[RMDB]
RNA sequence: GGGAACGACUCGAGUAGAGUCGAAAAGAGUAAAGAAAAGGGGAAUGUACUGUGGGUACAAUUAUUUGUCAAGAUUGCAAUGAAACCAUUGAUCAAUUUGAAAAUGAAAAAGUGACAACACUUUAUGAUCUAACAAGUAGUUCGCUACUUGUUAGAUAAAAGAAACAACAACAACAAC
Reactivity to 2A3 in 0.01 (KOAc 150mM, MgCl2 10mM, bicine 150mM(pH8.5), 24C), signal-to-noise 9, nucleotides 027 to 126: g060a000g030u150a020a080a020g040a050a050a010a010g020g010g010g020a040a100u060g010u030a020c040u030g070u190g220g070g020u050a010c020a020a040u140u070a070u060u090u090g200u030c010a010a020g030a130u020u020g000c010a000a010u020g040a190a070a080c120c010a010u000u010g030a050u130c010a010a010u020u020u060g040a040a040a010a020u070g080a060a100a030a020a010g040u030g030a040c040a130a040c000a070c010u030u040u020a130u240g060
Reactivity to DMS in 0.01 (KOAc 150mM, MgCl2 10mM, bicine 150mM(pH8.5), 24C), signal-to-noise 9, nucleotides 027 to 126: g000a120g020u010a050a080a090g000a040a030a050a040g010g010g000g010a130a070u010g010u010a040c050u010g020u020g010g020g010u010a020c040a060a090u020u020a050u010u010u010g010u010c020a060a050g000a020u000u000g000c020a020a010u000g000a160a130a150c280c020a020u000u000g000a110u030c020a020a030u010u000u000g000a040a030a030a030u010g010a040a060a040a030a040g010u010g000a100c300a080a090c090a040c020u000u000u010a070u030g010